[RMDB]
RNA sequence: GGGAACGACUCGAGUAGAGUCGAAAAUAGCUCAGUGUGCUAAGGGCAUGGAGAGUGACUGCCAUUUCUCCAGCCAUUCAUUCUACCUUGAGCCUGGCAGACCUUAGUCAUUGGUGCCUAAUUUAGGGUUCACUGUGGCUCCAUGGAUGGAGCACAGCGGUCUCGGUAGAUUCGUCUACCGAGACCGAAAAGAAACAACAACAACAAC
Reactivity to 2A3 in 0.01 (KOAc 150mM, MgCl2 10mM, bicine 150mM(pH8.5), 24C), signal-to-noise 1, nucleotides 027 to 156: u100a000g000c010u010c000a010g010u030g060u100g120c010u010a050a150g070g000g000c100a090u030g010g000a010g000a000g010u170g070a090c060u120g130c080c020a070u250u110u000c010u000c000c000a000g050c000c000a020u000u000c050a050u140u040c000u150a220c060c020u000u020g000a010g030c050c110u030g000g010c000a020g000a000c000c010u010u080a050g040u090c090a060u090u070g090g070u070g030c030c020u010a090a240u100u080u070a120g040g000g000u130u140c030a030c010u080g050u140g180g000c000u000c000c010a130u180g180g000a260u140g040g000a000g040c000a000c010a000g000